[RMDB]
About this RNA
Source: RMDB library OK1LIB, as collected in RNAgym. Chemical mapping of a 177-nucleotide RNA with DMS and 2A3. The 2A3 profile rests on 7,427 reads.
RNA sequence: GGGAACGACUCGAGUAGAGUCGAAAAUGAGUGCCAUAGACGCCGAGAUGCAGGCUCGUGCAUCACAGAACAAGUGUACAAACCUUUUGUUUGUUUGCCCAGGGGGUACUGGAAUGUCCUUGGUCUGGGAACGGUAUAAGUUCGCUUAUACCGUUCCAAAAGAAACAACAACAACAAC
Reactivity to DMS in 0.01 (KOAc 150mM, MgCl2 10mM, bicine 150mM(pH8.5), 24C), signal-to-noise 2, nucleotides 027 to 126: u010g000a090g020u010g040c030c020a030u020a010g010a080c080g010c070c010g000a050g010a030u020g030c010a050g010g020c030u020c110g000u020g020c000a040u010c000a270c030a030g010a050a090c050a020a010g050u000g040u020a020c000a020a060a140c010c040u000u040u000u060g010u020u050u010g000u000u000u010g000c000c000c050a130g030g000g000g010g010u000a020c090u020g000g030a060a210u000g000u000c000c000u000u000g000g000u000c000u020g000
Reactivity to 2A3 in 0.01 (KOAc 150mM, MgCl2 10mM, bicine 150mM(pH8.5), 24C), signal-to-noise 9, nucleotides 027 to 126: u150g030a030g060u150g050c030c020a040u090a130g080a060c080g020c020c000g050a050g010a050u020g010c010a020g100g020c090u100c090g050u040g000c010a010u010c010a010c010a020g040a020a010c030a070a030g020u040g050u300a040c020a020a070a080c010c000u060u080u050u110g140u080u100u110g160u080u100u150g040c000c030c020a050g080g060g010g020g040u050a060c030u030g020g020a080a050u070g010u030c010c000u010u020g040g000u010c020u040g030